[RMDB]
RNA sequence: GGGAACGACUCGAGUAGAGUCGAAAAAUGGGAGUUGCCUGAAGGAGUCUUUCUGAUAGAAGCCAGUGACAGGGGCUCACUGACCUUUGGGUGGGUCUCCUGAUCCUACUGGUACCAGUGGUCCUGACCAAGGACUAACCUUCGGGUUAGUCCUUGGAAAAGAAACAACAACAACAAC
Reactivity to DMS in 0.01 (KOAc 150mM, MgCl2 10mM, bicine 150mM(pH8.5), 24C), signal-to-noise 2, nucleotides 027 to 126: a070u000g010g020g000a090g000u000u000g020c010c010u000g030a070a090g020g010a070g010u000c030u000u000u000c020u000g010a180u010a110g010a090a160g010c040c010a060g020u000g000a030c010a040g010g010g000g020c020u010c010a000c020u020g000a230c260c140u020u020u010g020g010g010u010g010g010g010u000c000u010c010c000u010g010a090u000c010c040u010a010c010u000g000g020u000a090c110c120a060g000u000g000g000u010c020c040u000g000a250

An RNA of 177 nucleotides, treated with DMS and read out base by base. Reactivities are given for positions 27 through 126. Conditions: 150 mM KOAc, 10 mM MgCl2 and 150 mM bicine (pH 8.5), 24 C. For DMS, 1,602 sequencing reads were counted.